Structure probing data (2A3 and DMS) for a 177-nucleotide construct. DMS adducts were read by reverse transcription with MarathonRT. The data come from the RNA Mapping Database (RMDB), library OK2TST.

[RMDB]
RNA sequence: GGGAACGACUCGAGUAGAGUCGAAAAUUGCGGCUGCUGUACGCGGCAGAAGGAGAUACAUUUUUGCCUUCAACGGUAGUGGCACGCAUGGAGGCACAAAUCCGCUGCUGAUCGAUGAAUCGCAGUAGUGAUCGUCACCAUUCGUGGUGACGAUCACAAAAGAAACAACAACAACAAC
Reactivity to 2A3 in 0.01 (KOAc 150mM, MgCl2 10mM, bicine 150mM(pH8.5), 24C), signal-to-noise 2, nucleotides 027 to 126: u060u020g010c040g000g030c010u050g030c000u010g080u060a020c040g000c030g080g000c040a020g010a080a040g050g000a040g030a070u130a200c130a250u050u080u090u070u090g040c010c020u010u030c040a050a020c020g000g020u050a040g030u060g060g050c090a020c040g030c010a020u050g000g030a010g070g000c090a050c030a070a000a080u030c010c020g000c020u000g000c020u080g000a050u040c030g150a250u100g090a150a060u050c040g000c010a010g000u100a040
Reactivity to DMS in 0.01 (KOAc 150mM, MgCl2 10mM, bicine 150mM(pH8.5), 24C), signal-to-noise 2, nucleotides 027 to 126: u000u020g010c040g010g010c010u000g030c000u000g000u000a140c110g000c090g040g010c070a040g010a040a040g030g020a080g000a070u000a120c290a090u010u010u010u000u000g030c010c010u020u000c040a050a130c070g000g000u000a080g020u010g010g030c030a100c070g010c060a060u000g000g000a060g020g010c040a040c250a040a050a070u020c060c030g020c000u000g020c040u000g000a050u000c040g020a170u000g010a090a050u010c030g000c030a010g000u000a070